About this RNA
This 207-nucleotide RNA was probed chemically with DMS and 2A3. Reactivities are rounded to 0.1 and cut off at 0 and 3. The RNA was probed in 150 mM KOAc, 10 mM MgCl2 and 150 mM bicine (pH 8.5) at 24 C.
RNA sequence: GGGAACGACUCGAGUAGAGUCGAAAACUCUCUAGCUUCAGAGCUCUUCAGCUAGUCUCGAAGUCAGAGAGAGGAGAGAGACUUCGAUCCUAGCUGAAGCUAGCUAGCUGACUUCAGCUAGAGUCUCGAAGCUCUUCGAAGGAUCGAGAAGGAGAUCCAUAACACUUACUUUCGAGUAAGUGUUAUGAAAAGAAACAACAACAACAAC
Reactivity to DMS in 0.01 (KOAc 150mM, MgCl2 10mM, bicine 150mM(pH8.5), 24C), signal-to-noise 4, nucleotides 027 to 156: c020u000c010u000c000u000a030g000c010u000u000c010a080g030a070g020c020u000c010u000u000c020a090g030c020u000a020g020u000c050u000c000g010a040a020g020u000c020a090g010a170g000a090g010a060g010g000a130g010a120g020a180g010a050c010u000u000c000g010a040u010c030c000u000a020g020c010u000g010a030a000g010c020u000a040g030c020u000a090g020c010u000g010a120c120u020u000c030a020g010c020u000a010g000a050g010u000c020u000c040g000a060a030g010c020u010c030u000u000c030g010a140a130g010g000a050u000c020g010a130g010a090a100g000g010a120g010a060u000c010
Reactivity to 2A3 in 0.01 (KOAc 150mM, MgCl2 10mM, bicine 150mM(pH8.5), 24C), signal-to-noise 9, nucleotides 027 to 156: c020u030c000u000c040u040a010g010c010u040u010c060a070g000a010g020c010u010c000u040u020c000a010g000c010u020a000g020u010c000u000c020g000a010a010g000u010c040a020g050a020g010a030g020a060g300g010a050g010a010g000a000g010a020c000u000u000c000g000a010u000c000c000u000a000g000c010u010g000a000a000g000c000u010a020g010c000u010a020g010c010u020g090a300c000u280u280c180a000g000c000u000a000g000a020g050u020c010u000c030g020a030a020g020c020u010c000u130u100c060g090a110a060g040g020a070u120c080g010a010g020a070a030g060g030a040g010a010u030c010